[RMDB]
RNA sequence: GGGAACGACUCGAGUAGAGUCGAAAAGAUAUGGACCUUAUGGAGUGUUAGUUGGUCCACGAAGAACGAGCUCGGAAACGAGCUCGGGAGUGGACCAACGGGACACGUUGAAAUAAGGUCCUAAGUCCGAUUAUCCUCACUUCGGUGAGGAUAAUCGAAAAGAAACAACAACAACAAC
Reactivity to DMS in 0.01 (KOAc 150mM, MgCl2 10mM, bicine 150mM(pH8.5), 24C), signal-to-noise 1, nucleotides 027 to 126: g020a150u000a300u000g010g030a000c000c000u000u010a010u010g000g010a050g020u000g010u000u010a300g000u000u000g010g000u030c000c000a000c010g000a150a270g000a140a290c020g000a020g010c000u000c000g040g000a090a170a250c000g000a030g000c000u020c010g000g000g020a020g050u000g000g010a060c000c040a000a080c010g000g000g000a010c000a000c000g010u000u030g000a130a120a040u000a010a010g000g020u000c000c000u000a020a170g020u000c010
The record gives the reactivity of an RNA of 177 nucleotides to DMS. Conditions: 150 mM KOAc, 10 mM MgCl2 and 150 mM bicine (pH 8.5), 24 C. It was measured as part of the RMDB library TTRINS.